[RMDB]
Structure probing data (DMS and 2A3) for a 177-nucleotide construct. 2A3 adducts were read by reverse transcription with SuperScript II with manganese. The reactions ran in a buffer of 150 mM KOAc, 10 mM MgCl2 and 150 mM bicine (pH 8.5), at 24 C. For 2A3, 4,201 sequencing reads were counted.
RNA sequence: GGGAACGACUCGAGUAGAGUCGAAAAGGGGCUGGAUUGGCUCCAGAGCUCCAAUGCUUUGGCAGUCCUGGGGAAGGGAAGGGAUGUGCUUGGCUUCAGGUCAAGAGGGUGUGGGCCACAGAAGUGAGGUUUUAAGAUAGUUCGCUAUCUUAAAACCAAAAGAAACAACAACAACAAC
Reactivity to DMS in 0.01 (KOAc 150mM, MgCl2 10mM, bicine 150mM(pH8.5), 24C), signal-to-noise 3, nucleotides 027 to 126: g010g010g000g010c110u000g010g010a160u000u010g010g020c040u020c000c000a010g020a010g020c010u010c140c300a110a110u010g010c020u010u000u000g000g000c150a010g000u010c010c100u000g010g000g010g000a110a110g000g000g000a170a130g000g000g000a210u000g000u010g030c040u010u000g000g000c010u000u020c270a070g010g000u000c020a020a030g010a130g000g000g000u010g010u000g000g000g010c090c050a050c070a080g000a090a100g000u000g000a180
Reactivity to 2A3 in 0.01 (KOAc 150mM, MgCl2 10mM, bicine 150mM(pH8.5), 24C), signal-to-noise 4, nucleotides 027 to 126: g030g010g040g010c070u050g000g050a150u100u140g060g010c020u000c010c000a010g020a000g020c020u140c160c100a090a080u300g000c010u050u040u030g000g020c050a000g010u060c000c030u030g000g000g030g070a110a050g030g010g050a090a060g020g000g000a050u110g050u100g120c010u000u010g030g000c000u110u140c180a140g080g070u030c020a030a010g000a040g020g010g020u150g050u100g020g040g000c070c020a050c010a030g180a150a010g070u070g060a090

The data come from the RNA Mapping Database (RMDB), library OK2TRN.
The DMS profile rests on 3,014 reads.